[RMDB]
RNA sequence: GGGAACGACUCGAGUAGAGUCGAAAAGUAAGAAGGAAACUAAGGAGUAGAAGAAGAAGGGUGAAAAGAUGAAAGAAAUUUCACCACAUGCAGGGAAAGGGUAACUCGCCUGCACUAGAAAACCCACCUAGUCUAUGACGUUCGCGUCAUAGACUAGAAAAGAAACAACAACAACAAC
Reactivity to DMS in 0.01 (KOAc 150mM, MgCl2 10mM, bicine 150mM(pH8.5), 24C), signal-to-noise 3, nucleotides 027 to 126: g010u010a080a050g000a080a060g020g000a080a070a090c110u010a090a070g000g000a070g010u000a070g020a080a050g000a080a090g000a070a040g000g040g000u010g010a020a040a060a050g010a060u000g000a070a040a090g010a040a080a080u000u000u000c020a040c040c030a040c150a100u020g010c010a000g010g000g030a010a100a090g020g000g000u040a040a100c060u010c090g000c010c020u010g030c020a020c100u040a080g000a050a040a040a120c010c020c010a120c240
Reactivity to 2A3 in 0.01 (KOAc 150mM, MgCl2 10mM, bicine 150mM(pH8.5), 24C), signal-to-noise 3, nucleotides 027 to 126: g120u120a020a040g060a060a010g110g030a070a050a020c140u120a070a060g020g020a040g030u130a020g030a090a000g000a030a000g070a010a040g100g000g030u070g050a030a010a010a010g110a080u150g050a090a030a080g070a000a110a010u030u030u020c000a010c000c000a030c010a010u080g010c010a020g050g020g070a040a200a000g120g030g010u110a190a000c000u010c000g100c000c000u000g010c010a020c000u020a000g060a040a120a020a020c000c000c010a010c000

About this RNA
The record gives the reactivity of an RNA of 177 nucleotides to DMS and 2A3. The RNA was probed in 150 mM KOAc, 10 mM MgCl2 and 150 mM bicine (pH 8.5) at 24 C.